RNA sequence: GGGAACGACUCGAGUAGAGUCGAAAAUAAAACAGUGCGUGGUAGCACUACCAUGACCAUGUUUCGGCACAUGGUCAGCCGAGUACUGCUUCGCCUGUACUCAGCGAACAACAACAACAACAAAAAACCUUAACUCAUAGUUCGCUAUGAGUUAAGGAAAAGAAACAACAACAACAAC
Reactivity to 2A3 in 0.01 (KOAc 150mM, MgCl2 10mM, bicine 150mM(pH8.5), 24C), signal-to-noise 6, nucleotides 027 to 126: u120a000a070a010a000c040a010g010u020g110c010g030u060g070g090u100a030g010c010a000c010u030a050c000c040a080u050g000a000c000c000a000u010g040u010u100u200c180g130g030c090a000c000a010u000g010g000u010c000a000g000c020c030g010a000g000u010a010c000u010g030c010u070u090c070g040c010c000u010g010u040a030c020u030c030a040g040c030g090a040a020c020a010a000c000a010a000c000a000a020c000a030a010c050a030a080a010a000a010a020
Reactivity to DMS in 0.01 (KOAc 150mM, MgCl2 10mM, bicine 150mM(pH8.5), 24C), signal-to-noise 5, nucleotides 027 to 126: u010a080a040a080a070c100a020g010u010g010c000g010u010g020g010u020a120g010c020a010c010u010a090c150c060a250u010g000a030c000c010a010u000g000u000u000u010c140g000g010c160a140c000a000u000g010g010u000c000a030g000c120c120g000a020g020u000a020c010u000g010c020u000u000c180g000c070c010u000g000u000a040c020u000c000a060g010c060g010a110a100c040a050a030c020a020a030c050a050a040c070a000a020c060a030a030a140a060a050a070